[RMDB]
RNA sequence: GGGAACGACUCGAGUAGAGUCGAAAAAAAAUCUCUAAAUUCAGAACCUGGGUGAAAGAAUGUAUCAAUAAGAUUAAAGGGUUUCUAGAAAGAAACAGAGCCUGGAUUCUUGGGAUUGGCACACUUGGCACUAUUGUGUCUCUCAUCACAAUGUGCAGUGAACAGAGAUAUUCGUAUCUCUGUUCACAAAAGAAACAACAACAACAAC
Reactivity to 2A3 in 0.01 (KOAc 150mM, MgCl2 10mM, bicine 150mM(pH8.5), 24C), signal-to-noise 1, nucleotides 027 to 156: a010a020a000a000u050c050u010c020u060a050a100a200u170u060c060a020g040a050a040c030c040u060g060g060g040u070g040a070a040a080g000a090a100u250g080u100a040u040c100a070a110u190a280a060g030a130u020u200a120a070a070g040g070g010u080u070u000c020u000a030g120a050a280a000g050a090a090a000c040a060g000a000g090c000c030u040g000g000a080u000u030c020u040u070g020g000g050a050u030u070g090g000c020a010c000a000c230u300u110g130g000c020a020c060u160a090u070u020g000u000g000u000c010u000c000u050c060a090u120c010a020c000a000a000u020g000u030g010c000a000
Structure probing data (2A3) for a 207-nucleotide construct. It was measured as part of the RMDB library OK3TST. For 2A3, 599 sequencing reads were counted.